The record gives the reactivity of an RNA of 177 nucleotides to DMS and 2A3.
For 2A3 the reverse transcriptase was SuperScript II with manganese.
RNA sequence: GGGAACGACUCGAGUAGAGUCGAAAAGAUAUGGAUCAUUUAGGGAGCUGCUCGGAAACGAGACAGCGAGGAUCUAACUGAUCCUAAGUCAAAGAUUCCAUCUACAGUUCGCUGUAGAUGGAAUCAACAUGGAAGAAAUCUUCGGAUUUCUUCCAUGAAAAGAAACAACAACAACAAC
Reactivity to DMS in 0.01 (KOAc 150mM, MgCl2 10mM, bicine 150mM(pH8.5), 24C), signal-to-noise 4, nucleotides 027 to 126: g010a050u000a300u000g000g010a020u000c000a000u000u000u000a000g010g000g000a020g030c000u000g010c010u010c010g010g000a110a080a190c000g000a000g000a100c010a000g010c000g000a040g010g000a020u010c000u000a010a020c050u000g000a010u000c000c000u000a020a070g010u000c050a070a120a120g000a010u000u000c000c000a000u000c000u000a010c000a010g000u000u010c230g000c000u000g010u000a000g000a000u000g000g000a000a010u000c000a040a130
Reactivity to 2A3 in 0.01 (KOAc 150mM, MgCl2 10mM, bicine 150mM(pH8.5), 24C), signal-to-noise 3, nucleotides 027 to 126: g030a000u060a030u180g010g000a010u010c000a000u010u000u020a020g000g000g010a010g000c010u010g000c000u000c000g030g030a060a060a040c020g020a020g230a230c000a010g010c010g020a040g000g010a000u020c000u010a000a010c020u010g000a000u000c000c000u020a120a020g120u040c060a220a030a030g020a000u010u020c000c000a000u020c010u000a000c000a020g040u030u090c180g120c170u000g000u000a000g000a000u010g000g000a000a000u000c000a000a000